[RMDB]
RNA sequence: GGGAACGACUCGAGUAGAGUCGAAAAGAUAUGGAUCACUGUGGAUGAGCUAUGAAGUCGGAAACGAUGGAGCUCGCCAUUGAUCCUAAGUCAAACACAAGAAAGAUGUUCGCAUCUUUCUUGUGAAGUUUUUCACAACGUUCGCGUUGUGAAAAACAAAAGAAACAACAACAACAAC
Reactivity to DMS in 0.01 (KOAc 150mM, MgCl2 10mM, bicine 150mM(pH8.5), 24C), signal-to-noise 2, nucleotides 027 to 126: g030a030u000a300u020g030g000a020u000c010a060c300u000g010u000g020g020a070u010g000a000g010c010u030a190u000g010a090a150g030u000c010g000g010a140a070a140c000g000a030u000g000g000a010g020c010u000c010g000c020c010a030u000u000g000a010u000c010c010u000a030a090g000u000c020a090a080a280c020a000c000a000a000g000a010a010a000g020a000u010g010u000u020c230g010c000a010u000c000u000u000u000c000u000u020g010u000g010a020a040
Reactivity to 2A3 in 0.01 (KOAc 150mM, MgCl2 10mM, bicine 150mM(pH8.5), 24C), signal-to-noise 1, nucleotides 027 to 126: g030a020u060a000u150g030g000a030u030c030a020c250u110g000u080g080g100a300u120g030a030g020c010u100a270u300g060a010a000g010u020c030g000g040a090a030a050c010g000a010u000g000g030a020g000c010u000c020g070c010c000a030u040u040g010a000u000c010c010u020a110a010g030u010c010a120a020a030c000a000c010a020a000g010a010a010a010g000a000u020g060u080u190c260g020c180a010u000c050u000u000u040c020u000u000g020u000g000a000a010